[RMDB]
An RNA of 177 nucleotides, treated with 2A3 and DMS and read out base by base.
The DMS profile rests on 11,496 reads.
Values cover nucleotides 27 to 126.
The data come from the RNA Mapping Database (RMDB), library OK2TST.
The reactions ran in a buffer of 150 mM KOAc, 10 mM MgCl2 and 150 mM bicine (pH 8.5), at 24 C.

RNA sequence: GGGAACGACUCGAGUAGAGUCGAAAAGGGCGAGCUUUUCUAUAGCGACGGUGACGGCGCCUAUCUCCAGCGGGGCGACGGUGCGCCGCGCCGCCUUUGCGUGCGCAAGAAUGCGGUGCUGGAAGAACCUAUUAAUCCUCUUCGGAGGAUUAAUAGGAAAAGAAACAACAACAACAAC
Reactivity to 2A3 in 0.01 (KOAc 150mM, MgCl2 10mM, bicine 150mM(pH8.5), 24C), signal-to-noise 5, nucleotides 027 to 126: g020g010g000c030g020a040g040c050u160u190u120u090c110u150a160u130a130g020c010g080a070c020g010g020u020g020a040c010g000g010c010g000c000c000u040a060u020c050u020c020c020a060g020c060g020g050g010g000c030g010a010c010g020g050u160g070c010g000c010c010g010c010g000c010c010g010c010c000u060u050u070g050c020g060u130g060c030g000c020a030a080g090a180a070u110g030c030g050g040u070g010c010u020g000g030a040a040g040a040a030
Reactivity to DMS in 0.01 (KOAc 150mM, MgCl2 10mM, bicine 150mM(pH8.5), 24C), signal-to-noise 7, nucleotides 027 to 126: g010g000g010c030g020a140g020c030u000u010u010u010c110u000a120u010a070g010c030g010a240c050g000g010u010g010a110c020g000g010c010g010c010c020u000a060u010c050u000c010c020a120g030c070g010g000g010g000c050g010a020c030g010g010u000g010c020g010c010c010g000c020g010c040c010g000c010c040u000u000u000g020c080g010u010g010c070g010c040a080a080g010a070a090u000g010c030g020g010u010g010c020u000g000g010a070a160g010a130a190
The 2A3 profile rests on 6,611 reads. Values are in units of 0.01, from 0 to 300, in steps of 10.